[RMDB]
RNA sequence: GGGAACGACUCGAGUAGAGUCGAAAAUGAAUGUCUUUUCACUCUGUAAACAAUUUGUACUCUUCAAUGUCCUUUAGAGCUUUGAGGUAACCCGACAACCAUUUAUGAUCGGUUAGGUUUUGCAUACCUAGUACCUAAACUUCGGUUUAGGUACUAGAAAAGAAACAACAACAACAAC
Reactivity to DMS in 0.01 (KOAc 150mM, MgCl2 10mM, bicine 150mM(pH8.5), 24C), signal-to-noise 6, nucleotides 027 to 126: u010g010a120a070u000g010u000c030u000u000u000u000c030a060c060u000c050u000g010u000a060a090a080c080a090a090u010u000u010g010u000a070c080u000c030u000u000c030a040a060u000g010u010c020c030u000u000u000a100g010a110g000c040u000u000u000g010a060g000g010u000a060a110c080c010c020g010a060c080a050a070c060c040a080u010u000u010a070u020g010a060u010c070g010g000u000u000a060g020g010u000u000u000u010g030c110a080u000a090c170
Reactivity to 2A3 in 0.01 (KOAc 150mM, MgCl2 10mM, bicine 150mM(pH8.5), 24C), signal-to-noise 6, nucleotides 027 to 126: u070g040a030a030u090g050u060c030u030u070u040u040c030a040c020u070c030u030g070u120a070a090a050c040a070a180u100u100u170g050u070a070c030u020c010u090u030c030a020a080u060g080u130c030c000u150u170u110a080g010a010g040c030u060u050u100g020a020g020g030u030a050a060c030c000c010g020a010c020a040a030c030c020a090u090u200u130a160u180g130a120u060c020g000g050u030u040a030g050g060u040u020u070u130g020c010a030u030a110c000